[RMDB]
RNA sequence: GGGAACGACUCGAGUAGAGUCGAAAACAUGUACCCUUCGGGGUACAUGAACAUAACGCGGGCGUGGGACACCGCCGGAGCUAGCCUCAGAUACUCCCAGUAUUAGGUGCGCCUUCGGGCGCACCAAACUGGGUUACUCUUUCGAGAGUAACCCAGUAAAAGAAACAACAACAACAAC
Reactivity to DMS in 0.01 (KOAc 150mM, MgCl2 10mM, bicine 150mM(pH8.5), 24C), signal-to-noise 1, nucleotides 027 to 126: c010a000u010g040u000a010c010c000c000u010u000c260g000g020g000g000u010a010c000a010u010g000a100a080c070a140u000a070a110c100g010c050g000g030g020c040g040u000g000g000g010a180c140a040c020c010g000c040c020g010g000a110g010c010u000a100g030c060c020u000c040a070g010a170u000a080c120u000c010c020c010a110g020u010a060u010u020a060g010g040u030g030c060g010c000c000u000u010c220g010g010g050c040g020c000a000c030c020a000a020
Structure probing data (DMS) for a 177-nucleotide construct. The RNA was probed in 150 mM KOAc, 10 mM MgCl2 and 150 mM bicine (pH 8.5) at 24 C. The DMS profile rests on 731 reads.